[RMDB]
RNA sequence: GGGAACGACUCGAGUAGAGUCGAAAAAAUAUGCUCGACAGGCUGCCUGUCCGACAGAGCUUUUAGAUCUUCUGAUCUUUCCCUGCAGCAUAUCGCUUAAGCAUCAAGCGAUUGUCGGAUCACACAACAUUCCUUGACGAUUCGUCGUCAAGGAAUGAAAAGAAACAACAACAACAAC
Reactivity to DMS in 0.01 (KOAc 150mM, MgCl2 10mM, bicine 150mM(pH8.5), 24C), signal-to-noise 4, nucleotides 027 to 126: a080a080u010a080u010g010c050u000c030g000a110c150a070g010g000c100u000g020c030c180u000g020u000c010c010g020a020c040a060g000a070g010c080u000u000u000u000a010g000a010u000c020u000u010c300u000g000a000u000c000u000u000u000c010c000c010u010g010c030a030g030c010a060u020a050u000c020g020c020u000u000a080a140g030c250a120u010c170a020a030g010c000g010a010u010u010g010u000c020g010g000a110u000c190a050c100a070c120a080a130
Reactivity to 2A3 in 0.01 (KOAc 150mM, MgCl2 10mM, bicine 150mM(pH8.5), 24C), signal-to-noise 3, nucleotides 027 to 126: a000a030u270a080u120g000c010u020c020g060a030c040a040g030g040c020u030g040c030c040u110g100u000c010c020g010a010c010a020g050a000g020c000u020u010u010u030a010g000a010u030c040u250u020c150u300g000a010u000c000u010u010u010c010c000c010u020g020c010a010g000c010a010u030a010u140c010g020c040u030u050a110a040g120c020a140u120c100a030a000g000c010g020a020u000u020g040u000c020g000g020a040u060c040a060c020a010c000a240a000
Source information
This 177-nucleotide RNA was probed chemically with DMS and 2A3. For DMS, 2,853 sequencing reads were counted. The RNA was probed in 150 mM KOAc, 10 mM MgCl2 and 150 mM bicine (pH 8.5) at 24 C. Reactivities are rounded to 0.1 and cut off at 0 and 3. Source: RMDB library M2PK90, as collected in RNAgym.